Structure probing data (2A3) for a 177-nucleotide construct. High 2A3 reactivity points to a flexible backbone, as in loops and unpaired stretches. Values cover nucleotides 27 to 126. The RNA was probed in 150 mM KOAc, 10 mM MgCl2 and 150 mM bicine (pH 8.5) at 24 C. The 2A3 profile rests on 366 reads.
[RMDB]
RNA sequence: GGGAACGACUCGAGUAGAGUCGAAAACGGGAGAGCAUUAAGGAUUUGGCUGACUAUGCCUCUAAGAAUUUAGAAGCCAUGAAUCCCCCACUUUUCCUCCGCUUUCUUAACCUGCUAAUGAAUGAUGGGUGCUUCAUGUCUUCGGACAUGAAGCACCAAAAGAAACAACAACAACAAC
Reactivity to 2A3 in 0.01 (KOAc 150mM, MgCl2 10mM, bicine 150mM(pH8.5), 24C), signal-to-noise 1, nucleotides 027 to 126: c100g050g000g050a020g030a000g000c080a020u040u180a110a000g070g000a000u050u080u080g060g000c000u020g010a070c010u000a000u060g000c000c000u030c080u010a240a070g080a070a080u020u000u060a150g010a060a040g000c030c030a030u090g090a000a060u030c010c000c000c000c000a030c030u170u030u050u000c000c080u030c000c050g000c020u060u030u000c000u060u050a060a000c000c020u030g030c000u130a190a140u170g010a190a000u150g070a060u200g110